[RMDB]
RNA sequence: GGGAACGACUCGAGUAGAGUCGAAAAAUCAUACUGGAUAGUAGAAUGAGGUGUCACGGUCUCUGCUAUUUAGUAUGAGUACCACAGGUAGACUAGAUUGUGAUACCUCAUGUCUAUCCGUGGUAAAGUAUCAGUAAGUAUUCGUACUUGCUGAUACAAAAGAAACAACAACAACAAC
Reactivity to DMS in 0.01 (KOAc 150mM, MgCl2 10mM, bicine 150mM(pH8.5), 24C), signal-to-noise 7, nucleotides 027 to 126: a070u020c050a090u020a040c070u020g010g000a010u000a010g010u020a080g020a090a010u000g010a010g010g010u000g010u000c010a010c010g010g000u000c010u000c080u000g010c010u000a010u000u000u010a110g010u000a040u010g010a170g010u010a060c090c120a080c120a040g000g000u000a010g000a130c050u010a050g000a010u010u000g020u000g000a010u000a010c010c010u000c000a000u000g000u010c000u000a000u000c000c000g010u000g000g000u010a050a070a120
Reactivity to 2A3 in 0.01 (KOAc 150mM, MgCl2 10mM, bicine 150mM(pH8.5), 24C), signal-to-noise 6, nucleotides 027 to 126: a000u060c010a010u030a040c010u050g000g000a000u000a000g030u010a020g100a240a030u020g000a000g010g010u010g010u020c010a010c010g020g000u000c010u000c010u010g000c000u000a010u010u020u010a020g000u000a020u040g000a010g020u020a040c000c020a020c020a020g010g010u010a000g000a060c010u010a010g000a030u010u030g010u010g020a010u020a010c000c000u000c000a010u020g010u000c000u000a000u010c000c000g010u020g010g000u030a040a050a010